An RNA of 177 nucleotides, treated with 2A3 and DMS and read out base by base. Conditions: 150 mM KOAc, 10 mM MgCl2 and 150 mM bicine (pH 8.5), 24 C. Reactivities are rounded to 0.1 and cut off at 0 and 3. Values cover nucleotides 27 to 126.

RNA sequence: GGGAACGACUCGAGUAGAGUCGAAAAUUCAGAUUCAUCGCAUAGAAUUUGAUACAUACGGCAAAGCACCUUGAAAAUGAAUCAUCUGUAUUUUCUCCUUACAAUCACUCCCUCCCAGGACAUGUAAAAUAUUCUCUCAAUUCGUUGAGAGAAUAUUAAAAGAAACAACAACAACAAC
Reactivity to 2A3 in 0.01 (KOAc 150mM, MgCl2 10mM, bicine 150mM(pH8.5), 24C), signal-to-noise 9, nucleotides 027 to 126: u040u010c010a000g010a020u020u010c010a030u080c130g040c150a080u080a160g030a050a040u030u020u040g040a030u040a070c030a040u140a050c060g030g000c030a050a050a020g020c010a080c020c000u050u100g080a060a060a020a030u100g050a050a040u060c030a020u010c040u040g060u050a080u030u030u030u020c040u040c010c000u030u050a070c050a050a070u070c020a030c050u020c010c000c000u020c010c000c000a010g020g020a040c030a080u120g020u150a000a080
Reactivity to DMS in 0.01 (KOAc 150mM, MgCl2 10mM, bicine 150mM(pH8.5), 24C), signal-to-noise 9, nucleotides 027 to 126: u010u010c020a030g000a040u000u000c020a080u020c170g010c140a110u020a090g010a040a030u010u010u000g000a050u020a080c100a070u020a090c110g000g020c030a040a120a090g000c050a060c040c020u000u010g010a060a050a070a060u010g000a070a060u010c070a050u010c060u010g010u000a030u000u000u000u010c040u010c010c030u000u010a050c110a060a060u020c090a080c070u000c010c010c010u000c020c010c010a100g010g010a050c120a040u020g010u010a040a040